[RMDB]
RNA sequence: GGGAACGACUCGAGUAGAGUCGAAAACUGCUUAACUUCGGUUAAGCAGAAAGUGAUCAAAGCCGAAAGACACCGGCAAGUGACGGGCAGCACAAGCCGAAAAAACGGAUGACUUCGGUCAUCCGAACCCUCAGUUAAACUUCGGUUUAACUGAGGGAAAAGAAACAACAACAACAAC
Reactivity to DMS in 0.01 (KOAc 150mM, MgCl2 10mM, bicine 150mM(pH8.5), 24C), signal-to-noise 2, nucleotides 027 to 126: c000u000g010c000u010u000a000a000c000u000u010c180g040g000u000u000a000a010g010c000a000g000a050a050a170g000u000g000a060u000c040a060a050a100g030c030c030g000a110a110a060g000a090c040a080c130c070g020g000c000a040a180g020u010g010a050c070g000g010g020c070a040g000c010a020c050a030a300g000c010c000g000a000a070a050a050a110a120c020g010g000a000u000g000a000c000u000u030c130g030g010u000c000a020u000c000c000g000a050a040
Reactivity to 2A3 in 0.01 (KOAc 150mM, MgCl2 10mM, bicine 150mM(pH8.5), 24C), signal-to-noise 2, nucleotides 027 to 126: c010u000g020c000u000u000a020a000c000u020u020c100g090g030u010u020a000a000g000c000a000g010a000a000a000g040u060g040a190u060c060a080a060a050g100c010c010g090a070a050a020g080a020c030a010c060c010g000g020c010a010a050g000u000g020a050c060g000g050g070c070a050g020c020a040c030a080a000g000c000c000g100a070a040a000a000a000a020c020g000g010a000u010g000a010c020u040u060c250g050g000u000c000a000u000c000c000g000a010a000